This 177-nucleotide RNA was probed chemically with DMS and 2A3. For 2A3 the reverse transcriptase was SuperScript II with manganese. The 2A3 profile rests on 931 reads. Source: RMDB library RFM100, as collected in RNAgym.
RNA sequence: GGGAACGACUCGAGUAGAGUCGAAAAGCUCCCCUGUGCUCAGUUCUAACAGGGUAGUCUGGCAGGACACACAGCAAUUCCCUCUCAGUUUAGGAGGGCCGUCCUAAGAAUAGGGCUGGCUCUUAAAUAUCCUAGGGAACUUCGGUUCCCUAGGAUAAAAAGAAACAACAACAACAAC
Reactivity to DMS in 0.01 (KOAc 150mM, MgCl2 10mM, bicine 150mM(pH8.5), 24C), signal-to-noise 1, nucleotides 027 to 126: g000c160u000c000c000c050c040u000g000u000g000c030u040c120a070g020u020u000c030u050a180a080c050a010g000g040g010u030a030g020u010c020u030g000g030c140a020g030g000a060c110a140c040a060c080a000g000c090a020a140u000u000c000c000c000u060c170u030c110a060g000u010u020u010a060g040g020a010g000g010g000c000c040g000u000c000c000u000a130a180g040a170a140u020a030g000g000g000c000u040g020g020c000u000c030u000u030a000a090a110
Reactivity to 2A3 in 0.01 (KOAc 150mM, MgCl2 10mM, bicine 150mM(pH8.5), 24C), signal-to-noise 2, nucleotides 027 to 126: g050c010u050c000c000c000c000u000g000u000g010c020u040c090a150g030u030u030c040u020a070a000c000a010g040g060g000u020a020g050u080c020u020g040g000c010a000g050g080a010c020a000c000a000c010a050g050c000a030a100u140u140c010c010c000u000c000u020c030a210g030u000u090u260a160g020g000a000g010g040g000c000c000g020u010c000c010u050a150a210g110a300a260u080a120g080g010g000c180u200g000g000c000u000c000u010u000a020a000a000